[RMDB]
RNA sequence: GGGAACGACUCGAGUAGAGUCGAAAAGUGGUCGCGUCUCUUCACCCACGCCUCUGCAAGCAAUAGCUAACGGGGACGUUUUCAACACAGCGUUGUCCAGGGCGGUUGCGUGUGGCGAAGGUGCUGGACUGGGACUACUAUUCGUAGUAGUCCCAGUAAAAGAAACAACAACAACAAC
Reactivity to 2A3 in 0.01 (KOAc 150mM, MgCl2 10mM, bicine 150mM(pH8.5), 24C), signal-to-noise 3, nucleotides 027 to 126: g110u100g040g070u080c020g020c060g090u010c060u020c000u070u040c010a030c020c020c010a010c000g000c010c000u030c030u030g060c020a020a080g010c020a060a300u040a250g000c010u060a110a050c040g000g000g000g000a010c000g000u020u000u040u140c140a140a060c030a020c040a140g010c000g020u030u030g120u080c020c030a080g090g020g020c020g030g000u020u010g000c010g010u050g040u140g020g020c020g010a010a020g030g040u050g030c070u070g020g010
Reactivity to DMS in 0.01 (KOAc 150mM, MgCl2 10mM, bicine 150mM(pH8.5), 24C), signal-to-noise 6, nucleotides 027 to 126: g030u000g010g020u000c060g000c070g010u000c050u010c010u000u000c040a070c020c000c040a090c030g010c000c010u000c010u010g020c040a220a080g010c010a090a070u010a110g030c020u010a140a160c100g000g000g000g000a030c020g010u000u000u020u020c130a090a080c270a130c280a050g000c010g000u000u000g000u010c000c020a160g010g000g010c000g000g000u000u010g000c010g010u010g010u010g010g010c090g000a060a060g010g000u000g010c090u000g000g010
Conditions: 150 mM KOAc, 10 mM MgCl2 and 150 mM bicine (pH 8.5), 24 C. The record gives the reactivity of an RNA of 177 nucleotides to 2A3 and DMS. The 2A3 profile rests on 3,973 reads. For 2A3 the reverse transcriptase was SuperScript II with manganese. The data come from the RNA Mapping Database (RMDB), library OK2TST.